[RMDB]
The record gives the reactivity of an RNA of 177 nucleotides to DMS and 2A3. High DMS reactivity at an A or C suggests that its Watson-Crick edge is free. The data come from the RNA Mapping Database (RMDB), library OK2TST. Conditions: 150 mM KOAc, 10 mM MgCl2 and 150 mM bicine (pH 8.5), 24 C.

RNA sequence: GGGAACGACUCGAGUAGAGUCGAAAAGUAUCAUAGUCUAAACGACCAACAGGAUAAAUACGUGCUUCUAUAUCUUUAAAGUAAUCUGUAACCACUGUACGUCCUCUAUCAUCAGAUACACUUGUUAGUCCUCUUACAUUUUCGAAUGUAAGAGGACAAAAGAAACAACAACAACAAC
Reactivity to DMS in 0.01 (KOAc 150mM, MgCl2 10mM, bicine 150mM(pH8.5), 24C), signal-to-noise 3, nucleotides 027 to 126: g010u010a060u000c020a060u010a050g010u000c050u010a090a120a140c150g030a060c030c040a060a090c200a070g000g000a090u020a040a130a100u010a060c080g020u000g010c090u000u000c040u010a060u000a060u010c040u000u020u000a070a040a100g010u000a020a070u000c040u000g000u020a070a060c100c070a050c050u000g020u010a040c090g000u010c020c010u010c080u010a050u000c070a080u020c090a100g000a060u000a060c090a100c090u010u000g000u000u000a120
Reactivity to 2A3 in 0.01 (KOAc 150mM, MgCl2 10mM, bicine 150mM(pH8.5), 24C), signal-to-noise 3, nucleotides 027 to 126: g020u020a000u050c020a040u120a060g030u000c040u090a100a100a120c100g010a020c010c030a030a030c010a070g060g010a030u040a150a130a000u140a050c020g000u020g050c010u040u060c020u050a110u030a070u150c040u060u140u110a070a170a010g010u040a010a110u040c050u090g040u040a020a040c050c010a040c050u050g010u040a010c050g030u020c000c000u010c030u020a040u050c030a010u010c010a020g030a050u020a060c040a030c140u140u040g070u080u060a030